Structure probing data (2A3 and DMS) for a 177-nucleotide construct. Conditions: 150 mM KOAc, 10 mM MgCl2 and 150 mM bicine (pH 8.5), 24 C. For 2A3, 1,882 sequencing reads were counted. For DMS the reverse transcriptase was MarathonRT. For 2A3 the reverse transcriptase was SuperScript II with manganese. Values are in units of 0.01, from 0 to 300, in steps of 10. The data come from the RNA Mapping Database (RMDB), library TTRDES.
RNA sequence: GGGAACGACUCGAGUAGAGUCGAAAAGAUAUGGACCUGCAUGGAGCAACAGCAUGUCAUUCGGAAACGAAUGCAUGACAUGCUUCUGUGAUGGGUCCUAAGUCAAAAGAAGCCGUUCGCGGCUUCACCGCAUGUCUAAGUUCGCUUAGACAUGCGGAAAAGAAACAACAACAACAAC
Reactivity to 2A3 in 0.01 (KOAc 150mM, MgCl2 10mM, bicine 150mM(pH8.5), 24C), signal-to-noise 1, nucleotides 027 to 126: g020a010u090a040u240g020g010a010c020c010u060g000c030a050u130g000g040a040g020c040a020a190c040a170g120c000a020u030g130u300c000a000u000u010c000g000g010a010a070a050c000g020a010a020u000g000c000a000u000g020a040c000a060u170g000c000u120u000c000u040g000u030g120a300u300g050g020g000u000c010c000u000a020a000g020u000c060a020a080a060a210g000a000a000g000c040c040g020u080u170c300g000c070g170g000c000u000u000c000a000
Reactivity to DMS in 0.01 (KOAc 150mM, MgCl2 10mM, bicine 150mM(pH8.5), 24C), signal-to-noise 1, nucleotides 027 to 126: g010a020u010a300u010g000g000a040c000c000u000g020c010a080u010g010g000a030g010c040a080a080c300a140g000c000a000u000g000u050c010a010u000u000c000g010g010a140a070a190c010g000a040a010u000g000c050a010u000g000a030c030a290u000g000c010u020u000c000u000g000u000g000a140u010g000g000g000u000c000c000u010a050a100g000u000c000a130a070a110a140g030a000a000g010c000c040g030u010u010c190g010c020g080g040c000u000u010c000a130